Conditions: 150 mM KOAc, 10 mM MgCl2 and 150 mM bicine (pH 8.5), 24 C. The record gives the reactivity of an RNA of 207 nucleotides to 2A3 and DMS. For 2A3 the reverse transcriptase was SuperScript II with manganese.

[RMDB]
RNA sequence: GGGAACGACUCGAGUAGAGUCGAAAAACAGAAAAAAGGAGUUUAAAUUAGAUUUGCAAACGGACGGUACUAAAUACCGUCACUUUUACCUCUAACUUAUCGUUAACUCUGCAAAAAGAAAACAAGAAAAACAAGCGUGAGUUCGCUCACGCUUGAACAAAUACAUUUGGUUCGCCAAAUGUAUUUGAAAAGAAACAACAACAACAAC
Reactivity to 2A3 in 0.01 (KOAc 150mM, MgCl2 10mM, bicine 150mM(pH8.5), 24C), signal-to-noise 3, nucleotides 027 to 156: a000c040a030g110a030a120a020a010a010a070g060g000a040g030u120u160u110a070a110a070u030u040a010g020a050u050u080u200g050c100a030a020a060c050g000g000a000c010g000g000u030a030c070u260a170a060a080u020a020c000c000g010u010c000a020c000u000u010u010u050a000c000c010u000c010u020a000a050c030u090u080a030u140c030g060u020u020a010a010c010u000c020u100g040c120a020a060a040a070a060g100a040a090a050a010c100a100a000g170a080a100a010a040a040c000a020a000g000c000g020u000g000a000g000u020u060c160g010c100u010c000a000c000g000c020u000u000g000a000a000
Reactivity to DMS in 0.01 (KOAc 150mM, MgCl2 10mM, bicine 150mM(pH8.5), 24C), signal-to-noise 1, nucleotides 027 to 156: a030c030a160g000a000a030a030a130a120a090g030g030a140g000u010u010u000a000a020a030u000u000a050g000a060u040u000u000g040c000a020a000a040c160g020g100a030c010g030g040u010a000c010u000a090a050a300u010a000c010c000g020u000c000a010c000u000u000u000u000a050c000c300u000c030u010a000a030c010u010u000a010u000c090g000u000u000a030a040c010u000c010u000g000c020a020a030a090a140a080g000a080a070a040a090c110a060a060g010a110a080a020a140a080c030a000a000g020c020g110u000g000a050g010u010u000c230g020c030u010c000a000c000g000c030u000u000g000a020a080

For DMS the reverse transcriptase was MarathonRT.